Source: RMDB library OK3TST, as collected in RNAgym. An RNA of 207 nucleotides, treated with 2A3 and read out base by base. Values cover nucleotides 27 to 156. For 2A3 the reverse transcriptase was SuperScript II with manganese.
[RMDB]
RNA sequence: GGGAACGACUCGAGUAGAGUCGAAAAUAAUGAUCGCGUCAAGACUCCAUUUUUGUAAACAUGCGCAUAACCUAUCACGUCAUCUAUAACAACAUACCGGUGAUAACGUGCUAUUUCAUUGGGGUCUAUUGUGGCAGCGUCUUGCCGCCAUUGCACACCGUACUACCGUGUUCGCACGGUAGUACGGAAAAGAAACAACAACAACAAC
Reactivity to 2A3 in 0.01 (KOAc 150mM, MgCl2 10mM, bicine 150mM(pH8.5), 24C), signal-to-noise 2, nucleotides 027 to 156: u230a010a130u080g030a050u180c020g000c020g070u090c020a060a010g000a010c000u000c100c040a070u120u070u050u030u210g160u200a130a160a030c090a080u110g000c060g000c030a040u060a040a030c000c000u000a030u050c000a000c080g120u030c110a060u020c090u060a040u120a300a160c130a080a000c010a130u200a150c090c020g080g000u010g000a020u040a060a010c020g000u000g010c020u090a110u020u180u150c120a090u020u050g000g000g020g000u000c050u050a020u000u100g070u020g030g010c020a010g000c000g040u020c050u030u070g000c000c000g000c000c020a080u030u120g000c010a040c010a020